[RMDB]
Record summary:
An RNA of 177 nucleotides, treated with 2A3 and DMS and read out base by base. The reactions ran in a buffer of 150 mM KOAc, 10 mM MgCl2 and 150 mM bicine (pH 8.5), at 24 C. For DMS the reverse transcriptase was MarathonRT. The DMS profile rests on 1,701 reads.
RNA sequence: GGGAACGACUCGAGUAGAGUCGAAAACAUGUGUACUUCGGUACACAUGAAAUGACCGCCAUUAUUGGCUAAGGCUACACGGACGGCGGGGUCAAAUGCCGAAAAUCGUUGCGUUCGCGCAACGAAAGAUGCUUUAUCCGUUCGCGGAUAAAGCAUCAAAAGAAACAACAACAACAAC
Reactivity to 2A3 in 0.01 (KOAc 150mM, MgCl2 10mM, bicine 150mM(pH8.5), 24C), signal-to-noise 3, nucleotides 027 to 126: c000a000u000g000u000g010u010a010c010u010u060c180g140g000u000a000c000a000c000a000u000g000a010a000a020u070g020a000c000c000g120c010c020a080u100u140a140u190u290g040g000c030u050a140a070g140g000c000u040a050c100a010c140g050g100a030c030g000g070c020g050g020g000g000u010c010a010a050a080u150g020c010c000g000a080a030a000a060u040c010g010u000u000g000c000g010u030u030c230g010c020g000c080a010a000c000g010a010a000a000
Reactivity to DMS in 0.01 (KOAc 150mM, MgCl2 10mM, bicine 150mM(pH8.5), 24C), signal-to-noise 2, nucleotides 027 to 126: c000a000u000g010u000g010u000a000c000u010u010c130g050g020u000a000c000a010c010a000u000g000a040a060a200u010g000a110c010c010g010c000c020a020u010u000a100u010u000g020g010c010u000a050a080g040g000c010u010a070c150a120c090g000g020a040c020g000g000c010g020g010g010g000u000c070a020a090a080u000g000c020c030g000a090a040a060a090u010c000g000u000u000g000c000g010u010u020c140g020c020g000c000a010a000c020g010a000a020a080